[RMDB]
RNA sequence: GGGAACGACUCGAGUAGAGUCGAAAAGAAAGAAGGCGUAAUCGCCGUGUACGAGCUCCACGAUCAAUGAUUUUCUCGCCGGGCGGCAUUGAUCGGACGUACCUCGGAUUGCCGCCUUACAAAGUUAAUACUAGAUUAAAUAAACCGUCCUGGCAAAAGCUCAGUAAUAGUUCGCUAUUACUGAGCUAAAAGAAACAACAACAACAAC
Reactivity to 2A3 in 0.01 (KOAc 150mM, MgCl2 10mM, bicine 150mM(pH8.5), 24C), signal-to-noise 1, nucleotides 027 to 156: g050a000a250a000g070a020a020g000g010c000g020u020a030a070u070c040g060c120c120g000u000g000u010a000c000g050a040g050c290u170c100c130a100c020g010a000u000c000a020a000u020g030a030u060u100u170u130c160u040c020g020c000c000g000g010g000c000g000g040c000a000u010u010g000a000u000c000g000g000a000c010g000u030a030c030c020u080c070g010g000a000u000u170g070c050c030g000c000c000u000u160a070c060a040a050a030g030u150u110a060a030u080a140c030u040a020g110a120u220u160a210a240a050u190a090a070a050c000c000g020u060c000c040u030g000g000c000a010a020a140
The record gives the reactivity of an RNA of 207 nucleotides to 2A3. For 2A3 the reverse transcriptase was SuperScript II with manganese. The data come from the RNA Mapping Database (RMDB), library OK3TST. The RNA was probed in 150 mM KOAc, 10 mM MgCl2 and 150 mM bicine (pH 8.5) at 24 C. The 2A3 profile rests on 570 reads. High 2A3 reactivity points to a flexible backbone, as in loops and unpaired stretches.